The record gives the reactivity of an RNA of 207 nucleotides to DMS and 2A3. For 2A3 the reverse transcriptase was SuperScript II with manganese. For DMS the reverse transcriptase was MarathonRT. It was measured as part of the RMDB library RNAMAK.
RNA sequence: GGGAACGACUCGAGUAGAGUCGAAAACGCUGGGUGCCGAUGGUAGGCAAGGCCAGUACUGAAGCGCGCACGGUACGGCUGAUGACCCGAGAGUAGGCACCUGUGCUGAAGCGCGCACGGCAACCGAAAGGUGCGAUAGCCGAUCUUCGGAUCGGAAAAUUUGAAAGGAGUUCGCUCCUUUCAAAUUAAAAGAAACAACAACAACAAC
Reactivity to DMS in 0.01 (KOAc 150mM, MgCl2 10mM, bicine 150mM(pH8.5), 24C), signal-to-noise 3, nucleotides 027 to 156: c070g000c020u000g010g030g040u000g010c000c000g010a210u000g020g070u010a110g000g000c040a140a190g010g040c020c030a150g020u000a010c010u010g000a030a080g030c040g000c020g000c040a300c000g000g010u010a020c010g000g030c000u000g020a130u000g000a110c280c020c020g000a300g020a150g020u010a150g000g020c010a020c000c000u010g010u000g010c020u010g000a090a070g050c040g030c010g000c020a140c040g000g000c050a160a120c010c020g000a050a150a220g020g030u010g010c020g040a180u000a150g020c020c010g000a010u000c010u000u010c300g040g000a010u000c000g020g000a000a020
Reactivity to 2A3 in 0.01 (KOAc 150mM, MgCl2 10mM, bicine 150mM(pH8.5), 24C), signal-to-noise 2, nucleotides 027 to 156: c040g000c020u020g000g000g000u000g010c000c000g040a080u130g260g300u300a090g100g010c000a010a000g000g000c000c020a090g000u010a000c000u000g030a200a050g010c000g000c000g000c030a040c050g000g000u000a000c020g000g000c030u020g030a140u230g030a060c010c000c020g060a060g010a010g160u070a000g040g020c020a000c000c000u010g020u020g010c000u080g050a020a040g020c020g000c030g000c020a020c040g110g000c040a130a120c030c000g030a140a020a010g020g000u030g010c010g010a080u180a050g020c000c000g000a010u000c010u010u090c230g050g010a010u020c000g000g000a050a010

For DMS, 6,090 sequencing reads were counted.